[RMDB]
RNA sequence: GGGAACGACUCGAGUAGAGUCGAAAAGCACGCCCUGCGCGCCCAGCGCCGACACGUCGGGGGCGCCGGUCCAGUUGCCCGCCCAGGCGGCCGUGUCCGGCCCGCACAGCCGGUUGGCCAGGGCCGCCUUCCUGUCGGCAUUCGUGCCGACAGGAAGAAAAGAAACAACAACAACAAC
Reactivity to 2A3 in 0.01 (KOAc 150mM, MgCl2 10mM, bicine 150mM(pH8.5), 24C), signal-to-noise 2, nucleotides 027 to 126: g010c010a010c040g020c000c000c000u010g010c070g000c000g060c000c000c000a020g010c020g040c080c080g110a050c020a010c120g110u120c050g010g000g010g030g010c000g000c000c020g030g000u070c070c040a080g050u150u050g040c020c010c010g070c000c010c000a000g030g000c000g010g000c000c000g170u030g010u040c000c000g000g040c040c030c010g040c000a260c050a080g040c040c000g030g000u010u030g010g010c020c010a030g020g000g010c000c000g000c000
Reactivity to DMS in 0.01 (KOAc 150mM, MgCl2 10mM, bicine 150mM(pH8.5), 24C), signal-to-noise 2, nucleotides 027 to 126: g000c050a070c080g000c250c000c000u000g000c000g020c070g030c020c010c000a080g040c030g000c010c080g030a080c130a160c020g000u000c060g000g000g000g000g000c000g020c010c080g010g020u020c030c120a150g000u000u000g020c030c000c030g000c020c050c000a070g000g020c000g000g010c010c000g000u010g000u010c000c010g000g020c010c010c160g000c030a070c230a230g010c020c300g000g010u000u000g020g000c040c000a050g000g000g020c010c000g000c010